[RMDB]
RNA sequence: GGGAACGACUCGAGUAGAGUCGAAAAGCAAGCGGGUGGCGUGCGGUGUCAUUGGUUCCGGCUAGCUUGCCUGCCCGCAGGUCGGCCGCCCGAAUUGAUUUCGCAGGCUCACCGCGGCCCACCCUCGUCAAACGGCCAGAUUCGUCUGGCCGUUUGAAAAAGAAACAACAACAACAAC
Reactivity to DMS in 0.01 (KOAc 150mM, MgCl2 10mM, bicine 150mM(pH8.5), 24C), signal-to-noise 2, nucleotides 027 to 126: g010c060a060a180g020c020g000g030g030u000g000g000c030g000u000g000c000g020g000u000g010u000c000a020u000u000g000g000u000u010c300c070g000g010c010u010a110g060c000u000u050g040c010c060u030g030c100c130c180g000c020a000g000g050u000c070g030g030c000c030g000c290c020c110g000a030a000u010u030g010a030u020u000u000c000g040c010a040g010g000c000u000c070a070c010c030g030c000g020g000c020c000c030a110c040c030c050u060c080g000
Reactivity to 2A3 in 0.01 (KOAc 150mM, MgCl2 10mM, bicine 150mM(pH8.5), 24C), signal-to-noise 2, nucleotides 027 to 126: g060c050a130a030g020c070g010g010g060u100g050g000c110g070u020g000c000g000g040u050g000u010c010a010u030u110g070g000u120u110c000c010g000g000c000u010a050g030c020u010u000g020c000c010u140g070c060c000c000g020c010a010g000g000u170c010g020g000c040c020g030c030c000c020g060a080a080u080u050g020a040u000u020u050c030g000c020a010g240g000c110u100c100a030c020c000g000c000g050g050c000c000c000a030c010c000c000u090c020g050

An RNA of 177 nucleotides, treated with DMS and 2A3 and read out base by base. The DMS profile rests on 2,050 reads. It was measured as part of the RMDB library OK1LIB. Reactivities are rounded to 0.1 and cut off at 0 and 3.